Annotation:
Chemical mapping of a 177-nucleotide RNA with DMS and 2A3. The 2A3 profile rests on 1,585 reads. Values cover nucleotides 27 to 126. The reactions ran in a buffer of 150 mM KOAc, 10 mM MgCl2 and 150 mM bicine (pH 8.5), at 24 C. For 2A3 the reverse transcriptase was SuperScript II with manganese.
[RMDB]
RNA sequence: GGGAACGACUCGAGUAGAGUCGAAAACGCUCCAGGAGAGAGCGCAUCAGUCGAUCAGGAACUGAUCGACAUCUCCAGAAAGCCCGGAAGUGAAGUGAAGGGAUAGGGAACGGGCGCCCACCCAUAACCAUGUAGCUACGUUCGCGUAGCUACAUGGAAAAGAAACAACAACAACAAC
Reactivity to DMS in 0.01 (KOAc 150mM, MgCl2 10mM, bicine 150mM(pH8.5), 24C), signal-to-noise 2, nucleotides 027 to 126: c010g000c000u000c030c040a130g040g010a030g000a020g000a030g030c000g000c150a090u030c230a010g040u000c000g000a010u000c000a050g000g020a210a300c130u010g030a000u010c000g010a010c020a000u000c000u000c000c000a200g000a040a090a100g010c010c010c020g000g030a210a180g030u010g010a090a120g020u010g000a190a110g010g000g000a060u000a100g010g010g010a100a090c100g000g000g010c020g000c000c000c000a130c000c000c010a090u000a100a110
Reactivity to 2A3 in 0.01 (KOAc 150mM, MgCl2 10mM, bicine 150mM(pH8.5), 24C), signal-to-noise 2, nucleotides 027 to 126: c000g010c000u010c000c000a050g050g010a010g000a000g010a000g000c000g000c040a210u140c030a120g010u000c000g000a010u030c020a010g190g100a250a220c110u000g010a000u010c000g010a000c010a000u000c000u000c000c010a000g100a040a010a010g000c010c030c040g050g200a140a090g120u100g130a140a050g050u090g130a150a000g020g060g040a040u100a130g070g020g010a110a060c010g000g000g000c010g170c000c000c010a010c010c000c020a020u090a040a050